[RMDB]
RNA sequence: GGGAACGACUCGAGUAGAGUCGAAAAUGCCGCAAGUACGAGCAGAUCGAAGAGGGCACUGUCCGGCGCCUCAUCAUCCACAGGCUGAAGGCAGACGAUGAUGGUAUCUACCUGUGCGAGAUGCGGGUGCCAUAAAAGCCUUCGGGCUUUUAUGGCAAAAAGAAACAACAACAACAAC
Reactivity to DMS in 0.01 (KOAc 150mM, MgCl2 10mM, bicine 150mM(pH8.5), 24C), signal-to-noise 1, nucleotides 027 to 126: u000g050c000c010g000c090a080a110g040u020a140c070g010a100g010c060a030g010a120u000c010g020a100a070g010a040g010g010g010c050a050c050u000g010u020c120c110g030g030c120g020c000c000u010c030a010u000c010a150u010c030c030a030c040a070g000g020c040u020g000a080a220g000g010c060a070g000a070c280g000a060u020g030a040u000g010g000u020a090u000c030u000a160c010c000u010g010u010g000c080g000a130g000a030u010g010c220g000g000g050